The record gives the reactivity of an RNA of 207 nucleotides to 2A3. The data come from the RNA Mapping Database (RMDB), library OK3TST. Reactivities are rounded to 0.1 and cut off at 0 and 3. The reactions ran in a buffer of 150 mM KOAc, 10 mM MgCl2 and 150 mM bicine (pH 8.5), at 24 C.
[RMDB]
RNA sequence: GGGAACGACUCGAGUAGAGUCGAAAAAGGCACACUUCUAUAUCAUUUUACAAACAGAGUGACAGAGAGGUUCACCUCUGAGCUCUGUUAGUGUACGCAGAGCUUACAGGUGAAGCGUUGUAAGAACUGCGUACAUAGUUCUGUGAAUGCUGUGCCACCUACUGCCGGGAUUCGUCCCGGCAGUAGGAAAAGAAACAACAACAACAAC
Reactivity to 2A3 in 0.01 (KOAc 150mM, MgCl2 10mM, bicine 150mM(pH8.5), 24C), signal-to-noise 2, nucleotides 027 to 156: a010g020g000c020a000c000a000c040u040u010c050u150a130u120a080u250c120a130u070u140u070u270a050c040a010a020a020c020a010g000a000g020u080g210a160c040a030g050a000g080a110g070g150u290u240c210a190c130c000u000c000u000g000a000g000c000u000c000u000g000u000u010a000g000u000g000u000a000c010g000c000a000g030a020g100c010u000u000a000c020a000g080g040u120g280a050a010g070c040g170u100u050g000u000a000a000g000a020a040c000u010g000c020g000u000a000c000a000u010a000g040u000u050c080u100g090u030g010a000a000u030g010c090u010g060u000g010c000c000a010